Overview: The record gives the reactivity of an RNA of 207 nucleotides to 2A3 and DMS. The data come from the RNA Mapping Database (RMDB), library OK3TST.
RNA sequence: GGGAACGACUCGAGUAGAGUCGAAAAUCGAGCUUAGACGCAAAUAUAAAAUUGAGUUAGAAGGAUUACCUCCUAGAUGUUCAUAUACCAUUUCACCCGAACCUACUUAUUCUGUUGUGAAUCAUGAUUUAUGUAAGAUCAAAAAAUUUGCAGUCAAUCACAUAGUUCACUUCGGUGAACUAUGUGAAAAAGAAACAACAACAACAAC
Reactivity to 2A3 in 0.01 (KOAc 150mM, MgCl2 10mM, bicine 150mM(pH8.5), 24C), signal-to-noise 3, nucleotides 027 to 156: u080c020g020a020g090c050u060u170a030g030a050c030g000c010a010a050a030u140a060u110a100a160a130a120u080u060g020a000g050u070u120a100g040a150a090g050g010a090u080u150a100c010c030u000c000c010u010a100g000a130u040g050u090u080c020a000u060a000u020a090c020c020a010u030u040u070c040a030c000c010c030g030a010a010c020c050u100a080c030u190u090a090u270u040c000u030g100u100u030g010u090g030a020a030u060c020a020u060g090a050u030u050u090a030u040g020u070a010a040g000a090u010c000a030a060a010a020a030a090u060u080u050g060c050a050g040u070c030a040a020
Reactivity to DMS in 0.01 (KOAc 150mM, MgCl2 10mM, bicine 150mM(pH8.5), 24C), signal-to-noise 1, nucleotides 027 to 156: u000c060g000a120g030c000u000u010a070g020a030c000g010c040a030a080a130u000a120u010a060a170a110a140u020u030g010a120g000u010u010a070g000a070a030g000g020a300u010u010a060c040c030u000c010c010u000a070g010a040u000g000u000u020c010a060u000a050u000a030c020c020a110u000u000u010c020a010c040c050c170g010a030a090c080c040u000a140c150u010u000a050u000u000c010u000g000u000u000g000u010g010a060a100u030c070a140u010g010a060u030u030u030a030u040g020u000a110a080g010a090u030c030a000a060a100a110a120a130u000u000u000g010c030a100g020u000c050a110a300
The 2A3 profile rests on 1,122 reads.